Chemical mapping of a 177-nucleotide RNA with 2A3 and DMS. It was measured as part of the RMDB library TTRDEL. Values are in units of 0.01, from 0 to 300, in steps of 10. For 2A3 the reverse transcriptase was SuperScript II with manganese. For DMS, 3,935 sequencing reads were counted.

RNA sequence: GGGAACGACUCGAGUAGAGUCGAAAAGAUAUGGACGAUUGGAGGCUAGAAAUCGGAAACGAUUUGUAGCCUAUGAAGAAAUAUUUCGUCCUAAGUCAAAACACGAGAUACUUCGGUAUCUCGUGAAGCUGUAUUAGAGGUUCGCCUCUAAUACAGCAAAAGAAACAACAACAACAAC
Reactivity to 2A3 in 0.01 (KOAc 150mM, MgCl2 10mM, bicine 150mM(pH8.5), 24C), signal-to-noise 4, nucleotides 027 to 126: g010a000u060a040u140g000g000a000c010g000a000u030u180g160g110a030g000g000c000u010a010g160a060a010a000u000c020g010g000a090a050a040c020g000a000u040u010u050g300u030a020g000c000c000u010a010u050g010a000a200g110a020a190a030u260a150u050u090u020c010g000u010c000c000u010a130a020g060u030c040a050a050a090a070c020a000c010g010a020g000a010u000a000c000u040u110c210g070g000u000a000u000c010u000c000g000u000g000a000a020
Reactivity to DMS in 0.01 (KOAc 150mM, MgCl2 10mM, bicine 150mM(pH8.5), 24C), signal-to-noise 4, nucleotides 027 to 126: g010a020u010a300u000g010g000a010c000g000a020u010u000g010g020a010g020g010c000u000a010g010a000a020a020u010c010g000g000a100a110a170c000g000a010u000u000u000g010u000a010g000c000c000u000a040u010g000a140a110g000a090a110a090u010a090u000u010u000c000g010u000c000c000u000a040a100g000u000c040a100a070a180a250c010a000c000g000a010g000a010u000a010c000u010u010c210g010g010u000a000u000c000u000c000g020u000g000a020a080